[RMDB]
RNA sequence: GGGAACGACUCGAGUAGAGUCGAAAAAUACAAAGAAAUGGAAGAACAUUCCAUGCUCAUGGGUAGGAAGAAUCAAUAUCGUGAAAAUGGCCAUACUGCCCAAGGUAAUUUAUAGAUUCAAUGCCUAGCUUCUGAACUAGUUCGCUAGUUCAGAAGCAAAAGAAACAACAACAACAAC
Reactivity to DMS in 0.01 (KOAc 150mM, MgCl2 10mM, bicine 150mM(pH8.5), 24C), signal-to-noise 1, nucleotides 027 to 126: a140u050a090c140a050a070a070g000a120a100a000u000g000g000a040a060g000a120a060c170a200u010u000c030c000a020u000g030c070u020c070a160u000g010g000g080u050a030g010g000a080a170g000a000a030u000c010a180a020u000a040u000c120g000u020g000a050a070a140a080u010g000g000c050c070a070u000a130c180u000g020c020c000c020a100a040g010g020u000a020a040u020u000u000a070u000a150g000a020u000u000c010a070a070u000g000c030c000u000a110
Reactivity to 2A3 in 0.01 (KOAc 150mM, MgCl2 10mM, bicine 150mM(pH8.5), 24C), signal-to-noise 1, nucleotides 027 to 126: a010u160a020c030a000a250a000g030a080a180a000u060g040g000a000a000g050a110a000c000a130u060u000c000c000a010u030g030c020u030c080a120u180g070g000g000u010a000g090g020a130a020g010a040a020u000c000a020a060u080a020u160c010g040u100g220a030a190a000a100u120g000g070c000c010a030u040a190c050u040g040c000c000c000a000a020g000g000u040a010a010u070u170u150a220u040a070g030a030u000u050c010a070a040u070g010c000c020u020a040
Source: RMDB library OK2TST, as collected in RNAgym. Chemical mapping of a 177-nucleotide RNA with DMS and 2A3. Values are in units of 0.01, from 0 to 300, in steps of 10. DMS adducts were read by reverse transcription with MarathonRT. Conditions: 150 mM KOAc, 10 mM MgCl2 and 150 mM bicine (pH 8.5), 24 C. The 2A3 profile rests on 644 reads.